[RMDB]
Source information
The data come from the RNA Mapping Database (RMDB), library M2PK50. An RNA of 177 nucleotides, treated with DMS and 2A3 and read out base by base.
RNA sequence: GGGAACGACUCGAGUAGAGUCGAAAAGUUCGACCGUUCGCGGUCGAACAAAAUAAAACAGUACAUAGCCUCGCGAAAGCGUUGUACUGAAAGGCUUAGAAAAAACGAUAUGGUUCGCCAUAUCGAACCAUUUAUGCAGGUUCGCCUGCAUAAAUGGAAAAGAAACAACAACAACAAC
Reactivity to DMS in 0.01 (KOAc 150mM, MgCl2 10mM, bicine 150mM(pH8.5), 24C), signal-to-noise 3, nucleotides 027 to 126: g000u000u000c000g020a010c000c000g030u010u020c220g030c030g030g010u000c000g000a000a000c000a010a040a020a040u000a070a080a190a090c000a030g000u000a010c010a020u000a250g030c030c080u000c070g000c190g000a080a090a090g010c000g000u000u010g010u000a000c010u000g000a030a020a160g000g010c080u000u000a130g000a020a040a060a050a060a130c000g010a020u000a000u000g000g000u000u000c240g020c000c010a010u000a020u000c000g000a030a080
Reactivity to 2A3 in 0.01 (KOAc 150mM, MgCl2 10mM, bicine 150mM(pH8.5), 24C), signal-to-noise 4, nucleotides 027 to 126: g000u000u010c000g000a000c020c010g020u040u070c300g010c000g070g010u000c030g000a000a000c000a000a000a000a000u030a000a030a000a000c000a000g010u030a010c010a030u080a060g020c000c020u050c080g080c050g130a130a020a010g000c010g030u020u030g000u020a020c000u000g020a080a020a000g100g010c090u170u200a080g150a070a150a000a000a010a020c020g000a010u010a000u010g040g020u010u060c200g030c050c000a000u000a000u010c010g000a010a010
For 2A3, 5,755 sequencing reads were counted. Conditions: 150 mM KOAc, 10 mM MgCl2 and 150 mM bicine (pH 8.5), 24 C. For 2A3 the reverse transcriptase was SuperScript II with manganese.